Notes:
The record gives the reactivity of an RNA of 177 nucleotides to DMS. DMS adducts were read by reverse transcription with MarathonRT. The data come from the RNA Mapping Database (RMDB), library OK2TRN.
RNA sequence: GGGAACGACUCGAGUAGAGUCGAAAAAAGCAUUACUCAACCCCAGUUUGCUUUGUGAUAAUCAGUUGGAUAGGAACGGUAAUUUUGUUUGGGGCGAACGUGGUAAGCAUUCGAAGCGGCUCUUCGCCAGUCGAGUAGCAUUCGUGCUACUCGACUGAAAAGAAACAACAACAACAAC
Reactivity to DMS in 0.01 (KOAc 150mM, MgCl2 10mM, bicine 150mM(pH8.5), 24C), signal-to-noise 1, nucleotides 027 to 126: a050a050g000c020a030u000u000a000c050u000c110a090a290c030c010c010c060a100g010u010u000u000g000c000u000u000u000g000u000g000a170u000a030a030u010c070a100g000u000u000g030g010a080u000a060g010g000a120a060c100g000g040u000a070a070u010u000u010u010g020u000u000u000g000g000g010g030c050g000a050a040c180g040u000g000g010u020a060a070g000c080a090u000u020c080g000a030a090g010c050g010g010c050u000c050u000u000c080g050c050